[RMDB]
RNA sequence: GGGAACGACUCGAGUAGAGUCGAAAAAUCCUGGAGACCCUCGGGCUGAGGUUAGGGGCAAGGGCAACACUGAUGACUCCACGUCCUCGUCCAAGGCCUCAGAGGAGCCCUGCCAGGACCUCAGUGCUUUGGAGGAGGUGGUGAGAGCAGGCCAGGACAUAAAUUACGACUUCGGUCGUAAUUUAUGAAAAGAAACAACAACAACAAC
Reactivity to DMS in 0.01 (KOAc 150mM, MgCl2 10mM, bicine 150mM(pH8.5), 24C), signal-to-noise 2, nucleotides 027 to 156: a100u000c010c010u010g030g020a160g010a060c010c000c020u010c030g020g010g030c010u000g020a070g040g010u010u000a110g010g040g010g030c040a100a110g010g030g010c020a110a110c070a140c050u000g020a100u010g010a060c010u000c030c040a080c070g000u010c040c060u000c030g020u010c030c030a050a090g020g000c020c040u000c040a100g020a150g020g030a250g000c010c000c010u000g000c100c060a150g010g010a130c020c030u010c030a080g030u000g000c020u000u020u010g020g000a070g000g010a080g030g050u000g010g030u000g010a130g000a120g010c050a110g010g020c020c010a060g000g000a280
Reactivity to 2A3 in 0.01 (KOAc 150mM, MgCl2 10mM, bicine 150mM(pH8.5), 24C), signal-to-noise 1, nucleotides 027 to 156: a000u000c000c000u010g030g000a070g060a070c030c000c020u040c050g020g040g000c040u030g010a030g030g050u080u150a090g100g030g020g030c100a130a100g040g000g040c070a200a030c040a050c060u090g030a090u120g050a190c020u010c070c040a050c070g110u100c010c040u050c020g130u040c020c030a030a060g000g000c010c000u010c050a010g000a020g000g000a020g000c000c000c010u040g080c000c030a040g000g090a010c000c000u000c000a040g020u080g160c040u130u100u180g050g010a060g040g000a050g000g000u130g000g080u140g010a160g010a010g010c040a020g050g010c020c000a000g000g010a000
This 207-nucleotide RNA was probed chemically with DMS and 2A3. The RNA was probed in 150 mM KOAc, 10 mM MgCl2 and 150 mM bicine (pH 8.5) at 24 C. For DMS, 3,373 sequencing reads were counted. The data come from the RNA Mapping Database (RMDB), library OK3TST. For 2A3, 1,386 sequencing reads were counted.